RNA sequence: GGGAACGACUCGAGUAGAGUCGAAAAGUUUAUUCGAGAUUAUUGAGAAUCGUUGGUUUCCAUAGAUGUUCUUAGCUGAGGAAAUGCAACGUUAGACUACUAGGGACUAAGCAUGUAGAAGUUAGCAGGGAGUUUACUAAGGACGAGAGUUCGAGUCGACUAUACUAUCGUUCGCGAUAGUAUAGUCAAAAGAAACAACAACAACAAC
Reactivity to 2A3 in 0.01 (KOAc 150mM, MgCl2 10mM, bicine 150mM(pH8.5), 24C), signal-to-noise 5, nucleotides 027 to 156: g020u090u090u070a100u070u090c040g010a020g010a100u050u170a100u130u300g070a080g050a080a060u060c010g010u000u010g010g010u000u000u020c010c000a010u090a040g100a020u080g070u110u100c080u090u110a080g020c030u040g050a050g040g050a010a020a000u100g170c010a010a000c000g010u010u030a010g010a040c020u020a000c010u050a060g000g000g040a030c030u050a050a000g030c020a050u060g020u050a010g030a140a040g030u040u110a010g020c010a000g000g020g000a020g000u000u020u010a060c040u040a040a050g030g000a000c010g030a020g010a020g110u020u040c010g010a010g040u040c030
Reactivity to DMS in 0.01 (KOAc 150mM, MgCl2 10mM, bicine 150mM(pH8.5), 24C), signal-to-noise 4, nucleotides 027 to 156: g030u000u000u000a050u010u000c040g010a100g000a090u000u000a130u010u010g020a160g020a150a090u000c040g030u000u010g010g010u000u010u000c030c030a190u000a090g000a040u010g000u000u000c070u000u010a070g020c020u000g020a120g010g010a050a080a050u000g030c030a050a040c000g010u010u000a080g010a130c030u000a060c060u010a060g020g010g020a110c060u000a050a080g000c040a060u010g020u010a090g010a060a090g020u000u010a080g020c060a050g020g010g020a110g000u000u020u000a070c050u000a060a080g020g010a040c010g000a170g000a150g030u000u000c030g010a100g000u010c050
Annotation:
The record gives the reactivity of an RNA of 207 nucleotides to 2A3 and DMS. High DMS reactivity at an A or C suggests that its Watson-Crick edge is free. For DMS the reverse transcriptase was MarathonRT. For DMS, 8,964 sequencing reads were counted. For 2A3 the reverse transcriptase was SuperScript II with manganese. The reactions ran in a buffer of 150 mM KOAc, 10 mM MgCl2 and 150 mM bicine (pH 8.5), at 24 C.